[RMDB]
Overview
This 207-nucleotide RNA was probed chemically with 2A3. Conditions: 150 mM KOAc, 10 mM MgCl2 and 150 mM bicine (pH 8.5), 24 C. It was measured as part of the RMDB library OK3TST.

RNA sequence: GGGAACGACUCGAGUAGAGUCGAAAAUUAAGCGCAUUUAAGUCGCGUUCUACGCGAUCGCGAUAGGGGCCAUUUACUACAUUACGUGCAGUGUAUUGACCGGAUCUAGGGCCGCAAUUUGCGCCACCACAUGCAUAUUUAUCAACGUCAACAGGGACUUUCGUGUUACGUUCGCGUAACACGAAAGAAAAGAAACAACAACAACAAC
Reactivity to 2A3 in 0.01 (KOAc 150mM, MgCl2 10mM, bicine 150mM(pH8.5), 24C), signal-to-noise 2, nucleotides 027 to 156: u170u110a100a000g000c060g010c050a040u050u140u140a140a070g030u030c040g000c030g000u090u050c010u080a170c160g040c130g040a000u040c040g020c030g060a040u060a020g080g000g000g000c000c020a070u000u090u130a020c020u000a030c000a010u030u010a030c050g040u210g000c050a030g020u020g120u300a160u050u150g080a150c010c010g010g040a010u000c010u120a050g030g000g040c000c000g020c120a050a050u070u060u050g000c000g000c020c010a030c000c010a090c010a030u110g000c000a040u060a290u130u110u060a170u240c060a040a150c030g110u060c060a100a040c030a070g070g080g020a040